Source: RMDB library OK2TST, as collected in RNAgym. Structure probing data (DMS and 2A3) for a 177-nucleotide construct. The reactions ran in a buffer of 150 mM KOAc, 10 mM MgCl2 and 150 mM bicine (pH 8.5), at 24 C. High DMS reactivity at an A or C suggests that its Watson-Crick edge is free. Values cover nucleotides 27 to 126. The DMS profile rests on 1,179 reads. For 2A3 the reverse transcriptase was SuperScript II with manganese. For 2A3, 1,764 sequencing reads were counted.
[RMDB]
RNA sequence: GGGAACGACUCGAGUAGAGUCGAAAACAUCAGGCUAAAGCAACUGAUCCAGCACGAGGAGCUCCAUUGACGGAUUGGAUGACACCCUCUGAGGCGAUGGCAGUUAUCAAAACAAAGAUGGGUGAACGUAUCGUACUACCUUCGGGUAGUACGAUACAAAAGAAACAACAACAACAAC
Reactivity to DMS in 0.01 (KOAc 150mM, MgCl2 10mM, bicine 150mM(pH8.5), 24C), signal-to-noise 2, nucleotides 027 to 126: c150a070u010c060a050g010g000c080u000a090a090a060g010c120a050a090c050u000g000a060u030c040c040a030g020c050a070c140g000a050g030g000a080g000c110u000c050c000a020u000u020g000a170c120g000g000a080u000u020g000g000a050u000g030a160c000a070c040c010c100u000c040u020g050a230g000g020c030g040a090u000g000g010c020a020g000u000u000a040u040c100a040a080a070a090c170a070a050a090g010a070u000g000g030g000u000g000a070a090c220
Reactivity to 2A3 in 0.01 (KOAc 150mM, MgCl2 10mM, bicine 150mM(pH8.5), 24C), signal-to-noise 1, nucleotides 027 to 126: c010a040u060c020a020g000g030c030u100a180a000a060g040c000a010a070c000u040g000a030u050c010c020a030g000c010a030c070g020a040g040g020a010g040c020u020c020c010a040u060u070g090a040c060g080g050a050u000u120g000g030a040u140g050a040c010a070c040c040c000u000c010u050g100a100g090g030c020g020a030u070g060g000c020a020g000u030u020a080u080c060a030a080a030a070c030a030a080a030g010a030u130g000g060g000u060g040a040a010c070